[RMDB]
RNA sequence: GGGAACGACUCGAGUAGAGUCGAAAAUUGGAGUCCAAGAUGUUGACCAUGGCAGUAGUCAUCUGAGGCUUGAUGGGGACUGUAAGAUUCAUUUUCAAUAUGGCUCCCUCACAUGGCUCAGGAGGCCUUAGUUCCUUGUCAUAUGGGCCUCUCCAUACUAUACUGCUAAUUUCGAUUAGCAGUAUAGAAAAGAAACAACAACAACAAC
Reactivity to 2A3 in 0.01 (KOAc 150mM, MgCl2 10mM, bicine 150mM(pH8.5), 24C), signal-to-noise 8, nucleotides 027 to 156: u050u030g020g010a010g020u030c050c040a050a030g110a120u120g030u120u070g030a030c030c040a060u060g030g000c030a040g060u210a010g020u040c020a040u000c050u030g020a030g080g080c020u090u070g040a140u030g120g010g010g010a020c040u060g050u090a080a030g030a090u090u080c030a040u080u140u090u110c130a140a110u070a030u110g030g000c050u050c030c000c000u020c000a020c010a020u030g060g000c000u000c030a010g020g020a010g010g030c010c030u080u110a040g030u080u080c010c000u020u040g060u030c030a030u040a100u190g010g020g000c000c010u020c000u000c010c000a010u020a060
Reactivity to DMS in 0.01 (KOAc 150mM, MgCl2 10mM, bicine 150mM(pH8.5), 24C), signal-to-noise 5, nucleotides 027 to 156: u010u000g010g000a080g010u010c030c030a100a160g010a090u010g010u000u010g000a070c030c040a090u010g020g010c040a100g050u000a060g010u000c020a040u000c020u000g010a080g030g000c060u000u010g000a100u000g020g000g030g020a050c020u000g000u000a060a230g010a110u010u010c170a150u000u010u000u010c050a070a170u000a070u000g030g030c010u000c010c000c020u000c040a060c090a100u000g010g010c020u000c070a060g010g010a070g050g020c010c030u000u010a110g010u000u000c040c040u000u000g020u000c030a090u000a100u000g020g020g000c030c010u010c010u000c010c010a030u000a180